[RMDB]
RNA sequence: GGGAACGACUCGAGUAGAGUCGAAAACAUAAAAGCCUUGUGGAAUUACUUAGGAAUCGAGCAAGCUUUACACUUGCUAUCUUGUGGAGCUAACGAUUUAUCCUCCACACAUAUUGGAGAAAAGGUGCUGUCCUUAAGAUUUCGAUCUUAAGGACAGAAAAGAAACAACAACAACAAC
Reactivity to 2A3 in 0.01 (KOAc 150mM, MgCl2 10mM, bicine 150mM(pH8.5), 24C), signal-to-noise 5, nucleotides 027 to 126: c040a010u210a120a110a000a010g010c010c020u040u040g040u040g040g070a120a110u170u040a160c060u060u080a120g120g040a030a050u030c030g010a030g150c060a060a000g010c020u110u100u180a040c040a010c010u040u080g060c080u070a120u190c030u040u040g010u020g020g000a000g000c010u020a040a050c040g030a040u030u020u050a080u050c010c010u010c000c010a010c000a000c000a020u100a080u240u200g080g010a070g060a040a100a000a060g050g010u060g010
Reactivity to DMS in 0.01 (KOAc 150mM, MgCl2 10mM, bicine 150mM(pH8.5), 24C), signal-to-noise 4, nucleotides 027 to 126: c060a110u010a050a090a120a140g000c040c010u000u000g030u000g000g000a120a090u000u010a070c130u010u010a120g010g010a070a030u000c050g010a180g010c100a080a010g010c030u000u000u010a140c090a090c060u000u010g010c170u000a080u000c030u000u000g020u000g000g010a020g010c190u010a100a110c140g010a080u000u000u010a050u010c180c020u020c000c000a000c090a070c280a080u000a130u000u000g010g000a050g000a050a050a040a040g000g030u000g020
This 177-nucleotide RNA was probed chemically with 2A3 and DMS. The DMS profile rests on 3,350 reads. Source: RMDB library OK2TRN, as collected in RNAgym. The 2A3 profile rests on 5,092 reads. The RNA was probed in 150 mM KOAc, 10 mM MgCl2 and 150 mM bicine (pH 8.5) at 24 C.